[RMDB]
RNA sequence: GGGAACGACUCGAGUAGAGUCGAAAAGGAAAGCGCGCGAAUUGGAAACCAGGGCGCCAUAUUACGCGCGCAAGCAAUUGGGCCUUGGUUUUUUGGAAGGAUUAGAUAAUUACCCGGCGCCCGUCAAUAAUAUGUGCUAAUUCGUUAGCACAUAUUAAAAAGAAACAACAACAACAAC
Reactivity to 2A3 in 0.01 (KOAc 150mM, MgCl2 10mM, bicine 150mM(pH8.5), 24C), signal-to-noise 1, nucleotides 027 to 126: g010g020a150a040a060g000c020g000c010g030c010g060a060a040u180u120g080g070a130a120a020c080c060a170g020g030g000c040g040c000c000a020u090a030u120u110a040c020g000c000g000c000g010c010a010a030g000c010a010a170u090u070g030g050g000c000c040u020u020g000g000u120u010u000u000u070u060g030g000a020a020g020g040a020u070u030a060g030a070u100a090a060u120u080a080c020c000c000g000g000c010g000c080c020c000g030u020c010a020a020
Reactivity to DMS in 0.01 (KOAc 150mM, MgCl2 10mM, bicine 150mM(pH8.5), 24C), signal-to-noise 5, nucleotides 027 to 126: g000g020a130a130a160g020c020g030c030g030c020g010a090a100u000u010g010g010a060a070a050c080c110a090g010g010g000c090g020c010c020a020u020a050u000u000a100c030g010c040g000c020g020c040a030a060g000c120a080a080u010u000g010g010g010c010c020u010u000g000g000u000u000u000u000u010u000g010g010a130a080g010g000a080u010u000a080g000a090u010a050a040u000u010a100c010c010c040g010g010c080g010c010c010c010g010u000c090a050a110